About this RNA:
Structure probing data (DMS and 2A3) for a 177-nucleotide construct. Reactivities are given for positions 27 through 126.

RNA sequence: GGGAACGACUCGAGUAGAGUCGAAAAGAUAUGGACGUCCGGCUCGAUGAAAUAACCACGAAUUCGGAAACGAACUAUGGUUAUGGAGAGCGACGUCCUAAGUCAAAGCCCGUGUUCGCACGGGCAACGAUGUAUUUGUGUUCGCACAAAUACAUCGAAAAGAAACAACAACAACAAC
Reactivity to DMS in 0.01 (KOAc 150mM, MgCl2 10mM, bicine 150mM(pH8.5), 24C), signal-to-noise 4, nucleotides 027 to 126: g000a030u010a300u010g000g000a020c000g000u010c030c190g060g060c000u010c010g000a060u010g010a120a140a010u010a000a010c000c010a010c120g020a060a250u010u000c000g010g000a070a060a160c020g010a030a060c150u000a150u000g000g000u000u000a000u000g000g010a050g000a020g020c010g010a010c000g010u000c000c000u000a000a040g000u010c040a070a150a150g000c000c000c000g030u000g000u000u000c160g020c000a010c000g010g000g000c010a000a020
Reactivity to 2A3 in 0.01 (KOAc 150mM, MgCl2 10mM, bicine 150mM(pH8.5), 24C), signal-to-noise 5, nucleotides 027 to 126: g020a010u030a020u100g000g000a000c020g030u050c140c220g300g050c020u010c010g220a270u060g000a080a080a030u030a010a000c020c020a030c110g140a130a300u150u050c020g020g000a020a040a050c000g010a010a000c040u050a070u070g000g000u000u000a010u040g030g010a010g000a000g000c000g000a000c000g000u000c000c000u000a080a000g030u000c030a090a060a020g000c010c000c000g000u000g010u020u070c300g000c060a000c000g000g000g000c010a000a000